[RMDB]
Structure probing data (DMS and 2A3) for a 177-nucleotide construct.
RNA sequence: GGGAACGACUCGAGUAGAGUCGAAAAGCAAAUAAGAAUGAGGGUUGCGCUCGUUGCGGGACUUAACCCAACAUCUCACGACACGAGCUGACGACAGCCAUGCAACACCUGUGUGUGGUCCAGCCGACACGUAAAAUAUGUUCGCAUAUUUUACGUGAAAAGAAACAACAACAACAAC
Reactivity to DMS in 0.01 (KOAc 150mM, MgCl2 10mM, bicine 150mM(pH8.5), 24C), signal-to-noise 9, nucleotides 027 to 126: g010c090a060a060a070u010a090a080g010a060a070u000g010a130g000g010g010u000u000g010c080g010c010u000c030g010u010u000g020c040g010g000g000a020c050u000u010a040a060c020c010c010a040a060c140a040u000c020u000c010a040c040g010a050c040a050c030g000a040g010c010u000g010a070c050g000a040c080a070g010c010c010a030u000g000c010a030a060c090a060c120c060u010g010u010g000u010g020u000g000g010u000c050c040a110g000c040c050g010a220
Reactivity to 2A3 in 0.01 (KOAc 150mM, MgCl2 10mM, bicine 150mM(pH8.5), 24C), signal-to-noise 9, nucleotides 027 to 126: g050c030a050a050a140u230a160a070g090a060a070u130g030a090g060g050g010u050u040g060c040g000c050u030c040g080u080u180g070c060g020g000g030a060c030u100u120a060a060c010c010c010a010a020c020a040u030c020u020c020a060c080g130a030c030a010c110g020a040g000c020u020g040a040c050g020a030c030a020g000c000c010a020u050g020c010a110a100c040a090c120c120u130g010u010g010u010g010u010g070g020u020c020c010a000g010c010c010g020a030

Values cover nucleotides 27 to 126.